An RNA of 177 nucleotides, treated with 2A3 and DMS and read out base by base. For DMS the reverse transcriptase was MarathonRT. The 2A3 profile rests on 5,659 reads.
[RMDB]
RNA sequence: GGGAACGACUCGAGUAGAGUCGAAAAGAUAUGGACCAUUCUUUCCGAUAAGAUGCUGUCGGAAACGACAGGCAUCUUUUGACGGAGUGCAUGGUCCUAAGUCAAAUCUCGCGGUUCGCCGCGAGAACGUGCUAAAGGAGUUCGCUCCUUUAGCACGAAAAGAAACAACAACAACAAC
Reactivity to 2A3 in 0.01 (KOAc 150mM, MgCl2 10mM, bicine 150mM(pH8.5), 24C), signal-to-noise 3, nucleotides 027 to 126: g000a010u050a020u130g010g000a010c000c010a010u020u000c010u070u150u000c020c070g200a120u050a300a010g010a010u000g020c000u010g010u000c000g040g000a040a030a010c010g010a000c020a020g100g290c000a000u000c000u030u020u020u080g150a090c120g000g000a010g030u010g000c020a010u010g010g000u000c020c000u010a040a000g010u020c030a000a010a280u020c000u010c000g000c020g010g050u060u090c300g010c110c020g000c010g010a000g000a000a000
Reactivity to DMS in 0.01 (KOAc 150mM, MgCl2 10mM, bicine 150mM(pH8.5), 24C), signal-to-noise 3, nucleotides 027 to 126: g000a020u000a300u000g000g000a030c000c000a000u000u000c030u000u020u000c000c000g020a240u000a010a000g000a010u000g020c020u000g010u000c000g010g010a070a050a140c020g000a000c000a010g040g030c000a010u000c000u000u000u000u010g030a250c200g030g010a030g010u000g020c150a040u000g000g000u000c000c000u000a000a030g000u000c040a120a120a140u000c000u000c000g010c000g030g000u010u010c300g030c000c000g000c000g010a020g000a010a060
Source information:
The DMS profile rests on 3,369 reads. The reactions ran in a buffer of 150 mM KOAc, 10 mM MgCl2 and 150 mM bicine (pH 8.5), at 24 C.